Structure probing data (2A3) for a 207-nucleotide construct. 2A3 adducts were read by reverse transcription with SuperScript II with manganese.
RNA sequence: GGGAACGACUCGAGUAGAGUCGAAAACUCGCUGUUUUUGUGGCUGGCUUUCAGCGGGCUGGAGGAGGCGGGAGCGGAGGCGGAGGACCGAGCCAAAAACGUCAGCCGAGGCCGGGCGGCCCCGCUCAAAAUCUUCGUAUCUUCGGAUACGAAGAAACCCUAUAGUACUGUUCGCAGUACUAUAGGGAAAAGAAACAACAACAACAAC
Reactivity to 2A3 in 0.01 (KOAc 150mM, MgCl2 10mM, bicine 150mM(pH8.5), 24C), signal-to-noise 1, nucleotides 027 to 156: c000u010c000g030c000u010g060u050u010u030u070u090g140u120g030g010c010u020g030g000c000u020u070u060c000a010g000c020g040g010g000c030u010g100g010a050g040g030a050g060g060c240g010g000g020a020g020c030g030g080a040g070g100c100g030g040a000g000g030a000c000c090g050a050g010c020c040a000a000a000a060a060c040g020u020c020a010g010c040c020g000a020g000g000c050c060g030g020g030c070g030g030c020c050c010c000g090c000u000c040a020a150a040a080u020c010u000u000c000g000u020a000u000c000u020u020c070g130g000a000u000a000c000g000a000a000g000a000a000a000

Reactivities are given for positions 27 through 156. The RNA was probed in 150 mM KOAc, 10 mM MgCl2 and 150 mM bicine (pH 8.5) at 24 C. It was measured as part of the RMDB library M2RFPK.